Source: RMDB library RNAMAK, as collected in RNAgym. The record gives the reactivity of an RNA of 207 nucleotides to 2A3 and DMS. Reactivities are given for positions 27 through 156. The reactions ran in a buffer of 150 mM KOAc, 10 mM MgCl2 and 150 mM bicine (pH 8.5), at 24 C. As a SHAPE reagent, 2A3 marks flexible, mostly unpaired nucleotides at the ribose 2'-OH. High DMS reactivity at an A or C suggests that its Watson-Crick edge is free. For 2A3, 1,780 sequencing reads were counted.
[RMDB]
RNA sequence: GGGAACGACUCGAGUAGAGUCGAAAAUGGCAGUUCGCUGCCAGCCUGUGCGUACUACGUUAAUUUCUUUGAUCGUUUCUCCCCACCGCUUUCCCAAAUAGGAAAGCGAGGAAACGGGAGAAGAUAACGUAUCGCUUUAGCCUCAGUUCGCUGAGAAAUAGCCAGAGUUAUUCGUAACUCUGGCUAUAAAAGAAACAACAACAACAAC
Reactivity to 2A3 in 0.01 (KOAc 150mM, MgCl2 10mM, bicine 150mM(pH8.5), 24C), signal-to-noise 3, nucleotides 027 to 156: u040g040g000c010a020g030u080u100c140g110c080u000g000c000c000a010g040c000c000u150g060u160g040c010g020u070a140c050u010a010c030g010u050u070a100a130u250u160u040c030u050u030u030g060a070u090c020g020u010u010u010c070u130c020c030c010c020a040c020c000g000c000u010u000u000c010c000c000a070a300a180u150a020g000g010a010a000a000g000c020g000a030g000g030a000a010a010c000g000g010g010a030g010a010a010g010a010u010a000a000c010g000u000a090u300c010g010c000u020u070u080a020g030c000c020u000c000a030g020u110u170c180g050c080u030g120a020g010a040a100
Reactivity to DMS in 0.01 (KOAc 150mM, MgCl2 10mM, bicine 150mM(pH8.5), 24C), signal-to-noise 2, nucleotides 027 to 156: u000g000g010c020a030g040u000u000c290g010c020u020g000c000c010a030g000c040c010u000g010u000g030c050g030u000a080c160u000a040c010g000u010u000a060a110u000u000u000c030u000u020u000g020a300u010c000g010u010u000u000c050u010c190c050c040c030a300c210c000g010c020u010u010u010c000c000c020a050a220a170u010a040g000g010a010a000a010g000c010g000a160g020g000a030a040a020c040g020g000g000a300g010a020a010g000a110u000a020a000c010g000u000a070u010c020g030c000u020u000u000a090g010c020c010u000c020a150g030u020u010c080g050c020u040g020a150g020a090a180